Structure probing data (DMS and 2A3) for a 177-nucleotide construct. It was measured as part of the RMDB library OK2TST. For DMS the reverse transcriptase was MarathonRT. The RNA was probed in 150 mM KOAc, 10 mM MgCl2 and 150 mM bicine (pH 8.5) at 24 C.
[RMDB]
RNA sequence: GGGAACGACUCGAGUAGAGUCGAAAAGACGCGGUGUUGGUCAUGGCCGGUGCCUACCGCAGCUACGCCCACCACCACCCGGGUCGGUACUCGGCGUUCACCCGGAUGCCGCUGGGCGGUGACGAUCGUCAUCGUUUUAGUUCGCUAAAACGAUGACAAAAGAAACAACAACAACAAC
Reactivity to DMS in 0.01 (KOAc 150mM, MgCl2 10mM, bicine 150mM(pH8.5), 24C), signal-to-noise 3, nucleotides 027 to 126: g010a090c050g010c020g010g030u000g010u000u010g020g040u010c080a090u020g000g020c070c080g020g010u010g000c040c060u010a040c020c030g000c030a100g000c050u000a060c130g010c020c020c020a190c140c000a020c040c020a040c000c010c000g000g020g020u010c020g020g010u010a000c040u000c050g000g000c060g000u020u010c220a120c300c000c010g040g010a060u010g010c030c020g030c020u000g000g000g020c060g010g030u000g000a090c070g010a110u000c130
Reactivity to 2A3 in 0.01 (KOAc 150mM, MgCl2 10mM, bicine 150mM(pH8.5), 24C), signal-to-noise 2, nucleotides 027 to 126: g060a010c040g000c020g000g020u060g070u200u210g050g010u140c060a090u040g170g060c060c060g060g030u070g020c000c000u010a010c000c000g000c000a000g000c010u030a010c040g030c000c000c000a010c000c010a000c000c000a000c000c010c000g000g000g010u210c030g000g000u000a010c000u000c010g000g010c050g060u180u180c050a090c030c000c020g020g010a020u010g000c000c000g010c010u000g000g000g000c050g020g030u010g030a010c060g040a070u160c070